[RMDB]
RNA sequence: GGGAACGACUCGAGUAGAGUCGAAAAACAUAUUACGAUAUGAUUCAGAUGGUGUCUUACUGGUUCGUACCAAGGGACAUAAUGGUUUCUUGUUUCCAAACAAAGAACAAGUGGCGAGCCUGAAUAAAAAACUGACUGCCGUUCGCGGCAGUCAGAAUCAUUAGGCCACGUUCGCGUGGCCUAAUGAAAAAGAAACAACAACAACAAC
Reactivity to 2A3 in 0.01 (KOAc 150mM, MgCl2 10mM, bicine 150mM(pH8.5), 24C), signal-to-noise 2, nucleotides 027 to 156: a000c010a000u090a030u090u130a050c090g110a060u030a030u120g100a060u080u150c110a090g080a220u130g060g010u040g020u000c010u020u120a160c060u080g020g000u060u150c100g110u230a060c010c010a050a010g000g000g020a020c000a010u050a060a040u050g030g000u000u020u010c000u000u000g000u000u000u000c020c000a120a140a020c020a010a100a020g020a020a010c020a000a030g000u040g060g030c040g000a030g050c030c100u080g060a030a020u160a100a070a050a020a010a030c000u000g000a000c000u000g000c010c000g030u000u040c290g010c010g110g000c000a000g010u000c000a010g000a000a040
Notes:
Conditions: 150 mM KOAc, 10 mM MgCl2 and 150 mM bicine (pH 8.5), 24 C. This 207-nucleotide RNA was probed chemically with 2A3.